[RMDB]
RNA sequence: GGGAACGACUCGAGUAGAGUCGAAAAUCAGCGAACAAAGGAGCUCUGAAGCGCGAGGAGUAAGAGCAUAGCGAUAGGGGGAGAUGCUAGGAGUUAGGGGAGACCGAAGCGAGGAGGAAAGCAAAGAUCAUGAUUAUAGGUUCGCCUAUAAUCAUGAAAAAGAAACAACAACAACAAC
Reactivity to DMS in 0.01 (KOAc 150mM, MgCl2 10mM, bicine 150mM(pH8.5), 24C), signal-to-noise 4, nucleotides 027 to 126: u010c060a090g010c050g020a080a070c090a060a090a120g000g000a100g020c020u000c040u000g000a120a110g010c110g010c090g030a110g010g030a060g020u010a080a060g010a040g010c060a070u000a070g010c050g010a080u010a100g010g000g010g010g000a090g010a040u000g010c050u000a090g000g010a060g010u000u010a090g010g000g000g010a080g000a070c060c020g010a120a090g010c060g000a050g020g020a070g000g000a030a050a060g030c130a070a040a080g010a150
Reactivity to 2A3 in 0.01 (KOAc 150mM, MgCl2 10mM, bicine 150mM(pH8.5), 24C), signal-to-noise 2, nucleotides 027 to 126: u060c000a000g030c010g050a050a050c030a050a120a040g100g040a070g000c010u030c020u110g060a080a060g030c010g020c030g090a070g000g040a030g030u020a060a020g020a000g000c040a020u080a020g030c030g070a080u160a160g000g010g010g000g010a060g010a020u080g000c010u040a020g000g050a050g030u040u030a040g010g000g020g010a030g010a030c040c010g020a010a010g020c020g020a020g030g000a020g000g000a120a010a000g050c060a030a100a000g080a050